[RMDB]
RNA sequence: GGGAACGACUCGAGUAGAGUCGAAAAUUAGGAAUAAUGGUAGCAGCACCAAAGCCAAAGGCAAUAUUGUCGUGAUCACCGAUCAUAUUUUGUGCGAUGAGGAAGACAUUCAUAGGAACUAAGUAGGCAUGGUUCAAAAGUUCGCUUUUGAACCAUGAAAAGAAACAACAACAACAAC
Reactivity to DMS in 0.01 (KOAc 150mM, MgCl2 10mM, bicine 150mM(pH8.5), 24C), signal-to-noise 4, nucleotides 027 to 126: u000u010a070g010g020a110a100u010a090a060u000g020g030u000a070g020c030a040g030c030a070c050c050a020a100a140g000c030c040a060a070a100g010g010c040a050a090u000a050u000u010g020u000c050g000u000g000a090u000c040a050c100c060g000a050u010c100a030u010a070u000u010u010u000g010u010g020c060g010a040u000g000a060g000g010a130a080g010a050c070a030u010u000c060a060u000a050g010g000a060a070c080u010a030a080g020u010a070g000g010
Reactivity to 2A3 in 0.01 (KOAc 150mM, MgCl2 10mM, bicine 150mM(pH8.5), 24C), signal-to-noise 3, nucleotides 027 to 126: u070u020a040g000g120a060a150u100a080a040u110g040g020u030a020g030c040a010g000c020a020c020c020a030a010a010g030c040c000a050a040a000g020g000c030a040a050u060a110u170u080g040u040c040g030u030g040a090u090c020a030c170c030g030a020u020c020a000u050a110u110u150u060u090g070u040g020c030g010a090u050g020a020g050g030a050a040g020a030c020a030u040u010c030a020u100a090g080g000a010a030c020u020a060a080g100u030a000g120g020